The record gives the reactivity of an RNA of 177 nucleotides to DMS and 2A3. It was measured as part of the RMDB library OK2TST. The RNA was probed in 150 mM KOAc, 10 mM MgCl2 and 150 mM bicine (pH 8.5) at 24 C. DMS adducts were read by reverse transcription with MarathonRT. For 2A3 the reverse transcriptase was SuperScript II with manganese.
RNA sequence: GGGAACGACUCGAGUAGAGUCGAAAAGGAUUGCUGGUAGUUCUAUUUUCAAUUUAUUGAGAAACCUCCAUACUGUUCUCCAUAGUUGACUAUACUAACUUACUACCCCACCAACAGUAUGAAAGUACGAUGCUUAUUCAUUCGUGAAUAAGCAUCGAAAAGAAACAACAACAACAAC
Reactivity to DMS in 0.01 (KOAc 150mM, MgCl2 10mM, bicine 150mM(pH8.5), 24C), signal-to-noise 2, nucleotides 027 to 126: g000g000a130u010u020g020c110u000g030g010u000a030g020u000u010c150u000a080u020u010u000u000c010a030a020u000u000u000a030u020u000g010a040g000a050a100a110c110c080u000c110c040a040u000a020c060u010g000u000u000c030u010c050c070a040u000a040g020u000u010g000a070c120u000a080u000a050c190u000a040a060c080u020u000a070c100u000a170c130c030c080c010a120c100c100a050a060c100a040g000u000a010u000g000a110a080a090g010u010a130
Reactivity to 2A3 in 0.01 (KOAc 150mM, MgCl2 10mM, bicine 150mM(pH8.5), 24C), signal-to-noise 1, nucleotides 027 to 126: g060g010a100u030u090g030c020u040g000g030u020a020g040u030u030c010u060a080u000u040u000u020c010a060a030u030u290u260a110u110u090g040a050g030a090a050a050c000c050u040c050c000a030u030a100c050u020g020u000u000c030u030c010c010a020u020a050g010u010u070g000a010c020u010a020u030a240c010u070a130a030c030u040u090a010c000u070a080c010c000c010c010a050c000c000a050a110c000a000g010u020a050u070g120a140a070a000g020u020a020

Source information
For 2A3, 934 sequencing reads were counted. The DMS profile rests on 1,326 reads.